[RMDB]
RNA sequence: GGGAACGACUCGAGUAGAGUCGAAAAUACCGCAGCAACCAGCGUCGGGUAGGUCGGCAGAAUGAACAGACCAGACACCGCAGCGAAAGAAGCAACAGCGGUCAGCGGUGAAACGUUCAGUGCCAGAGCAUGAGUACCUGUUCGCAGGUACUCAUGCAAAAGAAACAACAACAACAAC
Reactivity to 2A3 in 0.01 (KOAc 150mM, MgCl2 10mM, bicine 150mM(pH8.5), 24C), signal-to-noise 1, nucleotides 027 to 126: u040a000c020c010g100c030a040g030c030a050a130c030c030a010g020c020g010u050c000g020g000g050u030a080g000g150u070c040g020g070c030a010g070a190a220u050g000a080a000c000a020g080a070c000c010a010g000a000c020a030c020c000g000c020a060g000c030g090a160a130a120g110a110a040g000c040a030a100c050a080g000c000g000g050u020c000a020g040c010g000g000u000g020a060a020a010c090g000u050u010c020a050g030u020g040c020c010a050g000a000
Reactivity to DMS in 0.01 (KOAc 150mM, MgCl2 10mM, bicine 150mM(pH8.5), 24C), signal-to-noise 2, nucleotides 027 to 126: u010a120c030c060g010c060a100g000c090a080a110c060c020a110g030c020g030u000c080g040g000g040u030a030g000g010u000c070g010g000c010a020g000a060a130u000g000a030a050c080a190g030a030c010c020a070g000a280c120a040c000c030g010c010a110g020c020g000a090a080a150g020a040a190g020c000a090a050c180a100g000c010g020g010u000c120a050g010c070g000g000u000g020a030a100a130c150g000u000u020c020a050g000u020g000c020c000a220g000a110
The record gives the reactivity of an RNA of 177 nucleotides to 2A3 and DMS. The reactions ran in a buffer of 150 mM KOAc, 10 mM MgCl2 and 150 mM bicine (pH 8.5), at 24 C. It was measured as part of the RMDB library OK2TST.